Structure probing data (DMS and 2A3) for a 177-nucleotide construct. For DMS the reverse transcriptase was MarathonRT.
[RMDB]
RNA sequence: GGGAACGACUCGAGUAGAGUCGAAAAUACUCAGAGGCUCUGAGCAUAGUUUUUUAUAAAGCGCCUUUGGAAAUUGUAAAUCUAAUAUGGUACUGUUGAAAAUCGCCAACCCCAUGACAACUCCAAACAAUACCACCUGAUUCGUCAGGUGGUAUUGAAAAGAAACAACAACAACAAC
Reactivity to DMS in 0.01 (KOAc 150mM, MgCl2 10mM, bicine 150mM(pH8.5), 24C), signal-to-noise 3, nucleotides 027 to 126: u010a110c020u010c000a020g010a150g010g000c050u000c010u000g000a050g000c130a060u020a100g000u000u010u010u010u010u040a060u010a090a120a040g010c180g000c000c000u000u000u000g000g000a050a080a130u010u010g000u000a050a130a110u000c050u020a030a060u060a110u030g020g020u010a040c060u010g000u000u000g000a050a020a100a080u010c100g010c030c000a010a110c020c010c010c050a070u020g000a030c110a040a070c090u000c030c070a000a080a170
Reactivity to 2A3 in 0.01 (KOAc 150mM, MgCl2 10mM, bicine 150mM(pH8.5), 24C), signal-to-noise 3, nucleotides 027 to 126: u090a020c030u020c020a010g000a040g040g020c010u000c010u080g040a020g050c010a010u020a010g040u000u010u000u020u150u060a200u120a050a100a000g000c000g010c030c000u000u010u000g050g030a010a060a140u150u160g040u110a040a070a060u040c090u090a010a100u090a110u200g000g000u040a070c040u050g090u110u040g060a120a040a000a120u100c020g040c040c010a040a070c010c000c000c000a020u090g030a050c010a090a030c030u000c030c000a020a050a050

2A3 adducts were read by reverse transcription with SuperScript II with manganese. The RNA was probed in 150 mM KOAc, 10 mM MgCl2 and 150 mM bicine (pH 8.5) at 24 C.